[RMDB]
RNA sequence: GGGAACGACUCGAGUAGAGUCGAAAAGAUAUGGACGAUAUAGGGAGUAUUGUCGGAAACGACAACGUACAUCGAUCUAUGAUCGUCCUAAGUCAAAGUACACAGCCUCUUCGGAGGCUGUGUACAAGUACAUAAUCAUGUUCGCAUGAUUAUGUACAAAAGAAACAACAACAACAAC
Reactivity to 2A3 in 0.01 (KOAc 150mM, MgCl2 10mM, bicine 150mM(pH8.5), 24C), signal-to-noise 9, nucleotides 027 to 126: g020a010u060a040u130g010g000a010c000g010a000u000a000u000a020g090g020g020a060g020u030a010u040u030g000u020c000g020g020a050a040a020c010g010a000c010a030a040c140g060u060a010c020a220u240c110g120a050u030c040u010a020u100g300a080u040c000g000u000c000c000u000a070a000g030u010c040a100a050a110g000u000a000c000a000c000a010g010c000c010u040c020u100u180c300g090g000a000g000g000c000u000g000u000g000u000a000c000a000a000
Reactivity to DMS in 0.01 (KOAc 150mM, MgCl2 10mM, bicine 150mM(pH8.5), 24C), signal-to-noise 9, nucleotides 027 to 126: g000a030u000a300u000g000g000a010c000g010a010u000a020u000a010g010g000g010a160g020u000a100u000u000g000u000c000g010g000a060a070a130c000g010a010c010a010a030c280g020u000a030c080a220u010c140g010a110u010c000u000a010u010g010a020u000c000g010u000c000c000u010a020a090g000u000c030a100a080a140g010u000a000c000a010c000a010g000c000c000u000c000u000u000c200g020g000a020g000g010c000u000g000u000g000u000a000c000a010a080